[RMDB]
RNA sequence: GGGAACGACUCGAGUAGAGUCGAAAACUGAGGUGCAAGGGAACGGACUGGUGGCAUAGAGGGCUAAGGCCAGGAGUGGAGACUUCAGGGAGGGAAGAUGCAUCUCUCCUCCUGGGGGCCAUGCGUGCAACAAUGGAAAGUUCGCUUUCCAUUGUUGAAAAGAAACAACAACAACAAC
Reactivity to 2A3 in 0.01 (KOAc 150mM, MgCl2 10mM, bicine 150mM(pH8.5), 24C), signal-to-noise 4, nucleotides 027 to 126: c020u030g020a020g060g020u060g020c040a050a070g030g020g030a060a020c040g020g040a010c030u050g020g030u050g050g000c020a030u070a090g090a060g020g030g000c040u070a080a090g120g060c020c010a010g000g000a010g010u050g010g040a030g010a030c000u040u010c070a060g030g050g040a050g020g050g010a040a030g030a030u160g050c080a120u020c010u000c010u010c010c000u010c000c010u000g020g000g000g000g000c000c010a030u100g040c030g040u090g030
Reactivity to DMS in 0.01 (KOAc 150mM, MgCl2 10mM, bicine 150mM(pH8.5), 24C), signal-to-noise 9, nucleotides 027 to 126: c060u000g010a070g020g020u010g010c070a080a100g010g000g010a080a080c120g010g010a080c070u000g000g020u010g010g010c070a070u000a090g010a090g010g010g010c050u010a080a100g020g010c030c020a040g000g000a060g010u000g010g000a060g010a060c040u000u000c050a120g000g010g010a050g000g010g000a030a040g010a090u010g010c200a150u000c010u000c000u000c120c010u000c000c000u000g010g010g000g010g000c050c030a040u000g010c110g020u010g010
Chemical mapping of a 177-nucleotide RNA with 2A3 and DMS.
For DMS the reverse transcriptase was MarathonRT.
2A3 is a SHAPE reagent: it acylates the 2'-hydroxyl of flexible nucleotides of all four kinds.
It was measured as part of the RMDB library OK2TRN.